Chemical mapping of a 177-nucleotide RNA with DMS and 2A3. The reactions ran in a buffer of 150 mM KOAc, 10 mM MgCl2 and 150 mM bicine (pH 8.5), at 24 C. Reactivities are given for positions 27 through 126.
[RMDB]
RNA sequence: GGGAACGACUCGAGUAGAGUCGAAAAUAACGUUCAUCCCACACACGGGAUCGAUGGCAGUACUCACUAUGCCCGUCCCUUGUUGCUAAGCCCCGGGAAAAGAACUAGAGUUUACGCCGAGAACAACCCCCAUCUUCUAAUUCGUUAGAAGAUGGGGAAAAGAAACAACAACAACAAC
Reactivity to DMS in 0.01 (KOAc 150mM, MgCl2 10mM, bicine 150mM(pH8.5), 24C), signal-to-noise 5, nucleotides 027 to 126: u000a080a140c160g000u000u010c080a130u000c000c000c000a210c150a040c080a040c130g000g010g000a020u000c070g020a060u000g010g000c020a040g000u000a070c110u010c190a070c080u000a070u000g010c010c000c020g010u000c000c000c000u000u000g010u000u000g020c050u010a070a110g030c040c010c010c040g010g010g000a030a060a090a100g020a040a050c040u010a090g000a100g000u000u000u000a070c110g010c060c040g010a090g000a060a050c090a090a110c140
Reactivity to 2A3 in 0.01 (KOAc 150mM, MgCl2 10mM, bicine 150mM(pH8.5), 24C), signal-to-noise 2, nucleotides 027 to 126: u020a040a030c060g000u010u030c010a060u010c020c000c000a030c000a000c000a010c030g010g060g000a060u160c070g120a170u170g020g000c020a000g020u090a090c060u060c080a090c070u090a020u080g010c000c000c000g020u020c000c010c000u010u050g030u020u080g030c080u080a100a120g040c030c020c010c020g010g000g000a040a130a020a040g040a030a020c050u030a040g000a020g110u000u050u020a040c030g030c020c010g030a050g050a080a010c020a010a020c010